[RMDB]
RNA sequence: GGGAACGACUCGAGUAGAGUCGAAAAGCAAAUUGGCCAUAUCCAAUUAUUGGCAAACACGCUAUUAAAAAUGUUAUUACUGAAAGAAAAUUUUUGGUGGACAGAACUUUAUGGCGAAUUCCAUUUUCUUCAAAUUUUAUGAAUAUGGGUACGCUUACAACACAAUACGUUUCGACGUAUUGUGUUGAAAAGAAACAACAACAACAAC
Reactivity to 2A3 in 0.01 (KOAc 150mM, MgCl2 10mM, bicine 150mM(pH8.5), 24C), signal-to-noise 2, nucleotides 027 to 156: g000c010a070a060a000u120u060g070g000c010c030a010u030a020u100c030c100a030a030u150u050a100u070u170g020g020c000a050a150a000c070a030c030g000c000u030a060u140u170a120a050a120a000a020u050g000u040u040a150u110u110a030c020u020g070a040a000a000g090a120a300a220a300u000u000u050u090u050g010g010u000g030g000a010c020a040g080a070a040c010u090u070u070a050u120g000g070c000g050a080a090u150u100c020c000a070u120u150u050u050c000u160u030c050a170a230a280u150u090u080u110a080u220g010a000a000u040a010u010g000g040g020u060a040c030g000c070u000u000a020

This 207-nucleotide RNA was probed chemically with 2A3. Values cover nucleotides 27 to 156. 2A3 adducts were read by reverse transcription with SuperScript II with manganese. Conditions: 150 mM KOAc, 10 mM MgCl2 and 150 mM bicine (pH 8.5), 24 C. 2A3 is a SHAPE reagent: it acylates the 2'-hydroxyl of flexible nucleotides of all four kinds. It was measured as part of the RMDB library OK3TST.